[RMDB]
This 177-nucleotide RNA was probed chemically with 2A3 and DMS. 2A3 adducts were read by reverse transcription with SuperScript II with manganese. Values are in units of 0.01, from 0 to 300, in steps of 10. Conditions: 150 mM KOAc, 10 mM MgCl2 and 150 mM bicine (pH 8.5), 24 C. Source: RMDB libraries RFM100 and RFMREP, as collected in RNAgym.

RNA sequence: GGGAACGACUCGAGUAGAGUCGAAAAUUUAGUGCCUUCCGUCCCUAAACCGCCAACAGCCAGAACGGCUUCUCCCCGCGGUUUGUCACUGAUCCGCAGGGCCCGGAAGGGCCUUCGUCUUACCCGGAGAUGUACUUUUGUUCGCAAAAGUACAUCUAAAAGAAACAACAACAACAAC
Reactivity to 2A3 in 0.01 (KOAc 150mM, MgCl2 10mM, bicine 150mM(pH8.5), 24C), signal-to-noise 6, nucleotides 027 to 126: u090u080u060a060g010u040g050c000c000u020u040c040c020g030u020c000c010c000u030a070a060a020c030c020g020c030c030a050a030c030a110g030c030c010a060g050a180a040c060g020g000c000u040u020c030u020c000c010c000c010g020c010g010g020u030u020u050g020u010c010a020c060u040g040a060u050c030c020g020c050a020g010g000g000c000c010c000g100g060a090a090g030g000g000c000c000u030u050c020g050u000c020u040u080a110c000c010c000g010g050
Reactivity to DMS in 0.01 (KOAc 150mM, MgCl2 10mM, bicine 150mM(pH8.5), 24C), signal-to-noise 6, nucleotides 027 to 126: u020u010u020a070g020u030g000c050c030u010u000c050c030g010u000c020c020c020u010a030a070a080c050c030g020c030c090a070a150c180a060g000c030c020a160g010a080a230c140g000g000c010u010u010c070u000c020c010c000c090g000c020g000g010u010u010u010g000u010c070a040c080u010g000a070u010c080c040g020c090a080g000g010g010c070c040c010g000g070a120a100g010g000g020c010c010u000u000c060g010u010c050u010u010a130c020c000c010g000g010